[RMDB]
RNA sequence: GGGAACGACUCGAGUAGAGUCGAAAACACUGUCUGGAAACUCUGUCCGUAAAACAACAACCGGCAGCACCGACGAAUUCGUAACAGAAGGUUGCGGGAUGCCAGCCAAAAAAAAAACCAUCAAUAGCCCUGCCAACAAGUUCGCUUGUUGGCAGGGAAAAGAAACAACAACAACAAC
Reactivity to 2A3 in 0.01 (KOAc 150mM, MgCl2 10mM, bicine 150mM(pH8.5), 24C), signal-to-noise 1, nucleotides 027 to 126: c130a010c000u030g000u040c020u050g000g000a070a000a050c170u130c000u080g080u030c080c020g020u130a020a120a250a300c050a030a030c000a030a000c030c020g000g020c000a000g000c070a010c020c020g160a190c000g070a000a050u000u000c000g000u090a130a050c000a090g060a100a010g060g000u070u070g000c000g000g020g000a050u090g090c030c000a000g000c000c020a170a240a000a000a000a000a000a000a000a000c000c000a000u160c060a000a130u000a090g020
Chemical mapping of a 177-nucleotide RNA with 2A3.
The RNA was probed in 150 mM KOAc, 10 mM MgCl2 and 150 mM bicine (pH 8.5) at 24 C.
For 2A3 the reverse transcriptase was SuperScript II with manganese.
It was measured as part of the RMDB library OK1LIB.